An RNA of 177 nucleotides, treated with DMS and 2A3 and read out base by base. For 2A3 the reverse transcriptase was SuperScript II with manganese. The reactions ran in a buffer of 150 mM KOAc, 10 mM MgCl2 and 150 mM bicine (pH 8.5), at 24 C. It was measured as part of the RMDB library OK1LIB.
[RMDB]
RNA sequence: GGGAACGACUCGAGUAGAGUCGAAAAGAAGAGAAGCGCGCGAAUUGGAAACCAGCGAACCGUAUUACGCGCGCAAGGAACCGGGCCUUGGUUCGUUGGAAAGAUUAGAUAAUUUCGCUGGUAAAGAAUACCCACUCACUUUCGAGUGAGUGGGUAUAAAAGAAACAACAACAACAAC
Reactivity to DMS in 0.01 (KOAc 150mM, MgCl2 10mM, bicine 150mM(pH8.5), 24C), signal-to-noise 2, nucleotides 027 to 126: g000a180a090g000a180g010a160a170g010c000g000c010g010c000g000a060a020u020u020g010g000a150a110a070c020c000a000g010c000g000a010a110c080c030g000u030a020u030u000a150c000g000c000g000c000g030c030a020a020g010g010a070a060c020c000g000g000g000c040c020u010u030g010g010u000u000c020g000u000u010g000g030a040a070a060g010a090u030u020a050g030a140u010a060a110u010u020u000c010g020c000u000g000g010u030a060a050a100g000a140
Reactivity to 2A3 in 0.01 (KOAc 150mM, MgCl2 10mM, bicine 150mM(pH8.5), 24C), signal-to-noise 2, nucleotides 027 to 126: g060a010a000g080a000g000a080a030g070c000g000c000g000c020g000a010a010u050u050g010g010a080a060a060c000c000a000g000c000g000a010a020c010c000g070u210a050u130u080a070c000g000c000g010c000g000c000a020a000g040g000a000a010c000c000g030g160g000c000c040u110u060g000g000u050u020c000g170u130u060g050g070a000a010a010g130a000u080u190a030g100a160u150a110a140u050u050u000c000g000c000u000g000g010u000a000a120a000g030a030